[RMDB]
RNA sequence: GGGAACGACUCGAGUAGAGUCGAAAAUCAAGUCUGAAAAUGAAUUACGGCAGGCCAAGAUGACGUCCCUAUCGGAACAAUGGAGCGACUUGGUAACGCGCCAGAAGAUGGACGCUAUGGAGGUCGCCACUCCAGACGCCAAACACCUGAUCCUAAAAUCAGUACGCUUUUUCGAAAGCGUACUGAUAAAAGAAACAACAACAACAAC
Reactivity to 2A3 in 0.01 (KOAc 150mM, MgCl2 10mM, bicine 150mM(pH8.5), 24C), signal-to-noise 2, nucleotides 027 to 156: u140c060a190a000g050u000c010u020g100a020a000a060a130u110g050a100a040u240u120a180c060g000g030c050a080g030g000c000c020a020a050g010a040u010g020a050c010g010u020c000c000c000u000a040u050c010g000g010a110a020c040a150a230u080g010g000a040g000c010g070a160c140u100u140g040g000u090a110a000c030g000c000g010c010c000a000g020a000a060g010a020u060g000g000a020c000g000c020u010a010u030g030g000a000g040g000u010c020g030c040c000a000c010u000c000c000a000g010a020c020g010c010c000a060a070a000c050a020c020c050u050g060a100u140c070c000u140a120a180a010

Source: RMDB library OK3TST, as collected in RNAgym. An RNA of 207 nucleotides, treated with 2A3 and read out base by base. 2A3 adducts were read by reverse transcription with SuperScript II with manganese. Values are in units of 0.01, from 0 to 300, in steps of 10.